[RMDB]
RNA sequence: GGGAACGACUCGAGUAGAGUCGAAAAAAAAGAUAUGGAUCCUUCUACCCACCAUACGUGAUCUAUGAAGCUCUCUCGGAAACGAGAGAGUGGAGAUCUCGUAUGAGGAAGGAUCCUAAGUCAAAAAGGUUAUACAGAGGUUCGCCUCUGUAUAACCAAAAGAAACAACAACAACAAC
Reactivity to DMS in 0.01 (KOAc 150mM, MgCl2 10mM, bicine 150mM(pH8.5), 24C), signal-to-noise 1, nucleotides 027 to 126: a040a070a070a040g040a050u000a020u000g000g000a010u000c010c000u000u010c000u000a120c090c010c150a300c020c020a010u010a000c000g000u010g010a000u010c020u010a290u020g010a080a100g000c000u000c000u000c000u020c000g010g000a040a000a010c000g010a040g000a000g000a000g010u010g000g000a000g000a020u010c000u000c000g000u000a010u000g000a070g000g000a070a000g010g000a010u000c000c000u000a000a020g000u000c050a050a060a120a210a080